RNA sequence: GGGAACGACUCGAGUAGAGUCGAAAAGUUGACGAACCGGACCAAUCCGGUGUUGUCCAGGUUGAUCCCGACGCCGUAGGGCUGGUCGGCCAUAUCGGGCCCGACGAUAUGCAGGUAGGGGUCUUCCAAGAGCAACUUGUUUCGACAAGUUGCUCUUAAAAGAAACAACAACAACAAC
Reactivity to 2A3 in 0.01 (KOAc 150mM, MgCl2 10mM, bicine 150mM(pH8.5), 24C), signal-to-noise 1, nucleotides 027 to 126: g020u010u120g000a040c050g150a010a030c000c000g000g110a080c100c240a040a190u090c000c000g000g010u000g060u000u030g000u000c010c000a010g070g000u010u010g000a000u000c050c000c090g000a000c150g000c010c010g160u190a040g090g120g000c030u030g150g090u090c000g020g090c050c090a120u100a030u250c080g080g000g040c050c000c000g030a000c000g020a000u040a050u250g040c040a000g060g030u050a010g000g000g040g000u000c000u030u060c010c070
Reactivity to DMS in 0.01 (KOAc 150mM, MgCl2 10mM, bicine 150mM(pH8.5), 24C), signal-to-noise 2, nucleotides 027 to 126: g010u010u010g010a010c070g000a180a010c000c000g020g030a170c280c190a110a150u010c000c000g020g000u010g010u000u030g000u030c010c120a100g030g010u000u000g000a010u010c000c010c000g010a080c250g000c000c000g040u030a080g000g000g000c000u010g020g010u060c090g060g000c090c090a110u030a070u000c070g010g010g000c000c000c030g050a120c000g000a110u090a030u020g020c060a050g010g010u040a100g000g000g020g000u000c000u000u000c020c000
The data come from the RNA Mapping Database (RMDB), library OK1LIB. The record gives the reactivity of an RNA of 177 nucleotides to 2A3 and DMS. For DMS the reverse transcriptase was MarathonRT. For 2A3 the reverse transcriptase was SuperScript II with manganese. The RNA was probed in 150 mM KOAc, 10 mM MgCl2 and 150 mM bicine (pH 8.5) at 24 C. For 2A3, 410 sequencing reads were counted. For DMS, 2,271 sequencing reads were counted.